[RMDB]
RNA sequence: GGGAACGACUCGAGUAGAGUCGAAAAGCGCCGGGCCAUGCAGCGACGGCCGCCGCGGAGCUCCGAGCAGCGGUAGCGCCCCCCUGUAAAGCGGUUCGCUAUGCCGGGGCCACUGUGAACCCUGCCGUAGUUUUGCUCAUUUCGAUGAGCAAAACUAAAAAGAAACAACAACAACAAC
Reactivity to DMS in 0.01 (KOAc 150mM, MgCl2 10mM, bicine 150mM(pH8.5), 24C), signal-to-noise 3, nucleotides 027 to 126: g030c030g000c000c060g010g010g010c020c040a090u020g010c080a070g000c050g000a110c190g000g010c010c010g040c040c020g010c010g040g000a230g020c030u010c050c040g000a170g030c030a080g000c070g010g000u000a100g000c020g000c100c080c020c020c030c030u000g000u050a070a110a040g020c110g020g010u000u030c010g040c000u000a070u010g000c030c080g000g000g000g000c080c030a040c060u000g000u020g010a150a110c040c030c000u020g010c020c070g040
Reactivity to 2A3 in 0.01 (KOAc 150mM, MgCl2 10mM, bicine 150mM(pH8.5), 24C), signal-to-noise 3, nucleotides 027 to 126: g070c040g000c000c000g010g030g020c050c020a080u190g030c050a070g030c030g080a060c010g020g000c010c000g020c000c010g020c010g060g030a040g010c010u040c040c060g030a010g000c030a000g000c030g050g010u070a040g020c000g010c030c010c000c000c000c010u030g040u150a090a090a010g050c060g030g060u130u160c020g010c040u060a050u110g040c010c010g020g010g000g030c000c010a080c020u050g030u050g020a050a060c010c000c000u030g010c010c010g040
An RNA of 177 nucleotides, treated with DMS and 2A3 and read out base by base. Reactivities are given for positions 27 through 126. Source: RMDB library RFM100, as collected in RNAgym. For DMS the reverse transcriptase was MarathonRT. The RNA was probed in 150 mM KOAc, 10 mM MgCl2 and 150 mM bicine (pH 8.5) at 24 C.